[RMDB]
RNA sequence: GGGAACGACUCGAGUAGAGUCGAAAAUGAUCCACCCGGAGAUGAGCGGACAAGCCACAUCCAGAGGACCCCUUCAGCGAACAGAAGACCCUGGUACCGGGGGGGAAUAGGCCAUAGUACGAGGGGAAAACCCAGAACUUCGGUUCUGGGAAAAGAAACAACAACAACAAC
Reactivity to 2A3 in 0.01 (KOAc 150mM, MgCl2 10mM, bicine 150mM(pH8.5), 24C), signal-to-noise 5, nucleotides 027 to 129: u170g000a040u010c010c000a020c030c000c010g030g000a070g020a100u070g020a040g060c030g030g080a080c090a170a010g030c020c000a070c000a100u060c020c020a020g080a100g050g010a030c040c000c020c010u020u020c040a050g020c030g060a050a030c000a060g060a100a000g040a060c010c040c010u030g020g010u070a070c020c050g000g000g010g010g010g010g010a030a030u080a080g040g030c010c010a010u020a070g010u040a050c040g030a010g000g010g020g050a010a040a020a010
Reactivity to DMS in 0.01 (KOAc 150mM, MgCl2 10mM, bicine 150mM(pH8.5), 24C), signal-to-noise 4, nucleotides 027 to 129: u030g010a090u060c030c000a100c130c040c070g000g000a000g000a070u050g030a130g000c090g050g020a000c160a140a130g040c000c000a000c040a180u040c050c050a080g010a130g030g020a050c110c020c030c030u040u070c060a100g000c000g020a030a070c060a090g040a100a060g020a140c010c010c010u030g060g010u040a090c100c120g000g000g000g000g000g000g000a090a030u020a140g090g020c000c000a050u030a060g000u020a080c060g020a030g010g000g010g000a070a040a110a150